Notes:
Source: RMDB library OK1LIB, as collected in RNAgym. An RNA of 177 nucleotides, treated with DMS and 2A3 and read out base by base. The reactions ran in a buffer of 150 mM KOAc, 10 mM MgCl2 and 150 mM bicine (pH 8.5), at 24 C.
RNA sequence: GGGAACGACUCGAGUAGAGUCGAAAAAGCGCAACGGCGUUCUCAGCCGCGCACUGGAUCUCGGCGGUGUCUUCGAGAAUGACGAUCCUGUCGUCCGGCGCAUUUGCAACGAUCUCGGCAAUGACGGCCGUAGCCGACUAUUCGUAGUCGGCUACGGAAAAGAAACAACAACAACAAC
Reactivity to DMS in 0.01 (KOAc 150mM, MgCl2 10mM, bicine 150mM(pH8.5), 24C), signal-to-noise 2, nucleotides 027 to 126: a080g000c060g030c060a150a150c110g000g000c000g000u040u000c000u000c100a200g000c010c030g000c140g010c000a120c100u000g000g000a060u000c080u000c080g000g000c000g050g020u000g010u020c030u000u020c110g000a070g010a060a070u010g060a090c000g000a030u040c110c000u010g000u000c030g000u000c120c050g000g000c080g000c000a190u030u020u020g000c020a020a110c070g000a100u010c040u000c030g000g000c040a040a110u020g000a130c040g000g000
Reactivity to 2A3 in 0.01 (KOAc 150mM, MgCl2 10mM, bicine 150mM(pH8.5), 24C), signal-to-noise 4, nucleotides 027 to 126: a000g110c070g050c010a050a020c090g080g000c010g040u100u010c050u000c010a050g050c030c010g000c010g010c010a060c060u040g110g040a080u050c060u050c090g030g000c020g020g020u070g050u050c040u060u080c070g090a090g030a080a100u170g010a030c030g010a030u070c020c000u050g000u050c010g010u030c000c040g010g020c020g030c010a020u080u070u190g000c000a050a070c050g040a060u000c020u030c030g020g000c020a030a110u080g030a090c030g020g020

For DMS, 1,992 sequencing reads were counted. For 2A3, 2,269 sequencing reads were counted. Reactivities are given for positions 27 through 126.